An RNA of 207 nucleotides, treated with 2A3 and DMS and read out base by base.
Values cover nucleotides 27 to 156.
The RNA was probed in 150 mM KOAc, 10 mM MgCl2 and 150 mM bicine (pH 8.5) at 24 C.
The data come from the RNA Mapping Database (RMDB), library M2RFPK.
For DMS the reverse transcriptase was MarathonRT.
For 2A3, 5,232 sequencing reads were counted.

RNA sequence: GGGAACGACUCGAGUAGAGUCGAAAAGGAAUCGACAGUAGAGUGUCUCAUGUCAGUAAGCAUGCCGGGGAAUGGUGGUUUACCCCGUUAUCAAAUGAUUACCGACCAAUAAUUGGCGAAACUCGUUAGGCCCGUCCACACUUCGGUGUGGACGGAACCAUGUAUUGGUCUUCGGACCAAUACAUGGAAAAGAAACAACAACAACAAC
Reactivity to 2A3 in 0.01 (KOAc 150mM, MgCl2 10mM, bicine 150mM(pH8.5), 24C), signal-to-noise 6, nucleotides 027 to 156: g080g020a030a080u090c040g050a030c040a040g070u110a040g020a040g050u040g030u010c010u020c050a070u090g040u030c040a020g040u090a110a020g010c030a050u070g060c040c010g000g000g000g000a020a040u050g040g000u010g000g010u020u030u110a070c010c000c000c000g020u030u040a060u060c030a030a040a080u080g000a010u050u060a020c010c000g060a080c030c070a030a020u210a150a060u070u080g040g000c040g040a040a060a090c100u050c050g060u040u040a070g050g040c000c000c000g000u000c000c000a000c000a000c000u040u060c240g070g000u000g000u000g010g000a000c000g000g000a000a000
Reactivity to DMS in 0.01 (KOAc 150mM, MgCl2 10mM, bicine 150mM(pH8.5), 24C), signal-to-noise 1, nucleotides 027 to 156: g000g000a110a070u000c020g030a050c020a120g010u000a140g040a110g020u000g000u000c000u020c070a120u000g000u010c020a040g080u000a030a090g010c020a040u000g000c180c050g000g020g050g000a080a100u000g000g030u010g000g040u000u010u000a290c050c000c000c020g030u010u000a100u000c290a120a060a080u000g010a110u000u000a010c000c010g030a010c040c050a040a150u000a090a150u000u000g000g000c000g030a050a050a060c020u000c050g050u000u000a090g000g020c010c000c020g010u010c000c000a050c000a010c000u000u010c300g020g070u000g060u000g000g010a000c000g000g010a030a020